[RMDB]
RNA sequence: GGGAACGACUCGAGUAGAGUCGAAAAAAUACUAAUGUUAGGGAACGGGUGUGUGGCGCUCGUCAUGAAGAUAAACAAAAUUAUCGAAUAUAUUGUAGUAGCAAUCAUCGUUCUAGUGUGGACUUACCCUAUCCCCGAUGUUCGCAUCGGGGAUAGGAAAAGAAACAACAACAACAAC
Reactivity to 2A3 in 0.01 (KOAc 150mM, MgCl2 10mM, bicine 150mM(pH8.5), 24C), signal-to-noise 1, nucleotides 027 to 126: a000a000u160a000c050u130a020a110u220g020u080u190a000g150g000g000a030a010c100g000g100g000u000g000u000g000u000g100g000c000g000c000u000c000g000u070c050a020u060g000a080a000g000a030u030a000a110a060c220a230a080a140a070u140u000a000u000c030g060a090a000u150a000u020a000u000u300g000u130a130g090u080a100g000c000a150a180u080c000a100u010c100g000u000u000c000u000a060g010u000g130u060g090g000a000c000u040u050a120c030